[RMDB]
RNA sequence: GGGAACGACUCGAGUAGAGUCGAAAAACCUCAGUCUUCGGACUGAGGUGAGCGGAGCAUGGUGGCCGUGGGAUCUCCUCCUUGGUGACAAGGGCCCACGGGGUGCGGCACGCUUCGGCGUGCCGAAAGGUGCUUAACAGUUCGCUGUUAAGCACCUAAAAGAAACAACAACAACAAC
Reactivity to DMS in 0.01 (KOAc 150mM, MgCl2 10mM, bicine 150mM(pH8.5), 24C), signal-to-noise 1, nucleotides 027 to 126: a040c000c000u000c000a010g020u000c000u000u010c150g010g000a010c000u000g000a000g000g000u000g000a050g020c090g010g010a060g000c110a090u000g010g040u010g010g020c000c010g020u000g000g000g000a080u000c060u000c030c030u000c010c000u000u000g000g020u020g000a260c020a000a020g000g010g020c010c010c000a010c040g000g010g000g020u000g010c020g020g000c000a020c040g020c010u010u010c110g020g030c000g010u000g010c000c000g010a020a030